[RMDB]
Chemical mapping of a 207-nucleotide RNA with 2A3 and DMS. It was measured as part of the RMDB library OK3TST. The 2A3 profile rests on 1,470 reads.

RNA sequence: GGGAACGACUCGAGUAGAGUCGAAAAUCGGAUACCACUAAACGUCAUACCUUAGAUAUGAUUAAGAUAGUACUUGAAGUUUUGAGUUCUAAAUCUCAACGAUCCUACGCUAUUGAUAAUAAUAUUUCUAUUGGUUAUGCAAUCUGGAAUUGUCAUACAUAACGUGCACUUUCGAGUGCACGUUAUGAAAAGAAACAACAACAACAAC
Reactivity to 2A3 in 0.01 (KOAc 150mM, MgCl2 10mM, bicine 150mM(pH8.5), 24C), signal-to-noise 4, nucleotides 027 to 156: u100c000g060g030a040u090a070c020c070a050c100u190a130a090a040c070g070u050c040a020u020a010c000c020u040u040a030g000a050u020a040u090g030a030u070u040a020a000g010a010u010a000g020u060a060c080u060u110g040a110a010g110u030u000u130u180g010a010g000u060u100c080u190a120a260a300u110c000u000c000a010a030c030g040a040u030c000c010u030a030c080g020c000u030a010u040u040g050a030u080a270a010u060a050a020u040a070u080u130u000c010u030a070u060u140g000g000u110u010a020u030g000c020a020a060u060c090u100g030g070a060a050u180u180g080u150c010a020u270a300
Reactivity to DMS in 0.01 (KOAc 150mM, MgCl2 10mM, bicine 150mM(pH8.5), 24C), signal-to-noise 2, nucleotides 027 to 156: u000c040g050g000a170u000a270c000c000a040c050u000a070a130a100c120g020u000c010a040u020a040c010c040u020u000a070g020a040u000a000u000g000a050u000u010a110a300g020a130u000a020g050u010a090c080u000u010g000a050a120g000u000u010u000u010g000a080g010u000u010c040u010a090a140a140u000c000u000c030a040a050c080g010a120u000c000c020u000a120c130g010c030u000a010u000u000g000a110u000a030a050u000a070a020u000a060u000u010u000c020u000a060u000u000g010g000u000u000a050u000g040c060a090a100u000c070u010g010g020a110a090u000u000g030u000c040a080u030a090
Background: For 2A3 the reverse transcriptase was SuperScript II with manganese. As a SHAPE reagent, 2A3 marks flexible, mostly unpaired nucleotides at the ribose 2'-OH. The DMS profile rests on 2,243 reads.